[RMDB]
RNA sequence: GGGAACGACUCGAGUAGAGUCGAAAAACCAGGAGGCUUGGCGGGGCUGGGGCCUGGAGCGGGGGCAGUCAGGGCUGGGUGUGGCUGUGUCGGGGUGUGAGCAGCUUCACGUUUGCUCCGCAGAGAAAUAAUGUGACAAAUUCGUUUGUCACAUUAUAAAAGAAACAACAACAACAAC
Reactivity to DMS in 0.01 (KOAc 150mM, MgCl2 10mM, bicine 150mM(pH8.5), 24C), signal-to-noise 3, nucleotides 027 to 126: a080c040c010a100g010g020a140g000g000c180u000u000g000g030c150g000g020g000g000c130u000g000g000g020g020c060c080u000g000g000a090g020c120g020g020g020g010g010c080a060g010u010c130a090g020g000g010c100u000g020g010g020u010g000u000g000g000c060u000g010u000g010u010c070g020g010g020g010u000g010u010g010a120g000c030a040g000c000u010u000c140a050c110g020u000u000u000g010c020u000c020c060g010c080a120g010a110g010a070a080
Reactivity to 2A3 in 0.01 (KOAc 150mM, MgCl2 10mM, bicine 150mM(pH8.5), 24C), signal-to-noise 1, nucleotides 027 to 126: a030c000c020a010g000g050a070g020g050c120u080u070g040g020c080g000g020g030g050c070u080g020g020g040g010c000c060u090g040g020a040g000c060g000g010g000g040g000c000a050g050u070c040a020g000g080g010c030u060g030g060g010u060g030u010g050g040c020u040g010u040g060u140c050g010g070g010g000u090g020u060g010a000g010c010a010g010c000u120u120c050a020c100g040u070u090u120g000c020u020c010c020g000c030a050g030a030g010a070a110
This 177-nucleotide RNA was probed chemically with DMS and 2A3.
Values cover nucleotides 27 to 126.
It was measured as part of the RMDB library OK2TST.
For DMS the reverse transcriptase was MarathonRT.
The 2A3 profile rests on 1,299 reads.